Chemical mapping of a 177-nucleotide RNA with 2A3 and DMS. Values cover nucleotides 27 to 126. The reactions ran in a buffer of 150 mM KOAc, 10 mM MgCl2 and 150 mM bicine (pH 8.5), at 24 C. For DMS the reverse transcriptase was MarathonRT. The DMS profile rests on 1,053 reads. For 2A3, 1,061 sequencing reads were counted. The data come from the RNA Mapping Database (RMDB), library OK2TST.
[RMDB]
RNA sequence: GGGAACGACUCGAGUAGAGUCGAAAAGCUGCAUGCGGCUACGUUGUACAACAUUGCCGCCUAUCCUCAUCUGAAAGGAGAUGACCUGGCCGAGCAAGCGCAGGCUUUGUCAAACCGCGCCUAUGAAGGUACGCGGUAGAUUCGUCUACCGCGUACCAAAAGAAACAACAACAACAAC
Reactivity to 2A3 in 0.01 (KOAc 150mM, MgCl2 10mM, bicine 150mM(pH8.5), 24C), signal-to-noise 1, nucleotides 027 to 126: g000c020u010g040c060a100u050g010c010g030g010c030u070a030c060g060u010u060g120u170a070c060a100a010c020a100u080u100g000c010c020g000c000c000u040a080u000c000c000u000c010a150u010c080u050g080a120a100a060g060g000a080g040a030u050g010a010c000c020u000g040g040c010c000g030a050g030c080a130a160g030c080g020c070a030g040g000c000u040u040u040g030u010c020a000a040a040c030c050g020c000g060c000c010u110a190u160g160a120a040
Reactivity to DMS in 0.01 (KOAc 150mM, MgCl2 10mM, bicine 150mM(pH8.5), 24C), signal-to-noise 1, nucleotides 027 to 126: g030c030u010g000c030a140u000g010c000g010g020c030u000a050c100g010u000u000g000u000a070c140a040a050c020a120u000u010g000c020c020g020c010c140u000a070u020c050c010u000c050a090u000c030u000g030a090a170a090g010g000a020g020a130u000g000a040c030c020u000g000g000c050c040g010a070g010c090a120a100g000c080g030c040a160g030g010c010u000u010u010g000u000c060a020a130a140c080c030g000c100g000c030c070u000a020u010g000a110a090